Structure probing data (DMS and 2A3) for a 207-nucleotide construct. For DMS the reverse transcriptase was MarathonRT. 2A3 adducts were read by reverse transcription with SuperScript II with manganese. It was measured as part of the RMDB library OK3TST.
RNA sequence: GGGAACGACUCGAGUAGAGUCGAAAAGGUAGUUUUUAGCCGUUUCGACGGGAAUUGUAUUAUUACUUUUUCGUUUAUGGUUGGAAAGAAAAUUGUAAGGGUACAACUAUUAGUAAAAGAAGGUCUAAAUCAAGACGCUUUAAUUAACCUUCUUACAAAGAACACUGUAGUUCGCUACAGUGUUCUUAAAAGAAACAACAACAACAAC
Reactivity to DMS in 0.01 (KOAc 150mM, MgCl2 10mM, bicine 150mM(pH8.5), 24C), signal-to-noise 2, nucleotides 027 to 156: g030g050u010a050g020u000u010u020u000u000a200g010c000c020g020u000u000u010c020g020a070c030g030g010g010a020a050u000u010g000u000a010u000u000a080u010u010a030c010u000u000u000u000u000c020g000u000u010u000a040u000g010g020u000u000g020g020a050a050a130g010a040a050a020a050u000u010g010u000a040a080g010g010g030u000a010c020a040a040c060u000a100u020u000a120g020u000a070a090a070a060g000a050a020g020g020u000c030u000a050a080a120u000c080a040a120g000a070c110g010c160u010u010u000a040a070u000u000a030a030c010c000u000u000c010u010u000a050c110a070
Reactivity to 2A3 in 0.01 (KOAc 150mM, MgCl2 10mM, bicine 150mM(pH8.5), 24C), signal-to-noise 3, nucleotides 027 to 156: g060g010u060a040g020u050u020u030u080u080a060g060c020c010g000u000u030u120c160g070a040c030g010g000g070a090a110u070u030g000u110a040u090u030a050u060u020a080c000u040u040u000u000u040c000g040u020u020u130a100u090g030g000u060u060g070g020a130a080a080g010a000a070a090a100u170u060g030u050a050a070g060g000g020u040a020c020a050a010c020u060a090u190u090a070g040u090a020a090a000a120g000a020a010g030g000u020c040u090a080a120a130u140c050a040a030g060a060c070g040c070u080u080u030a080a090u060u020a060a000c000c000u020u030c010u000u020a030c080a010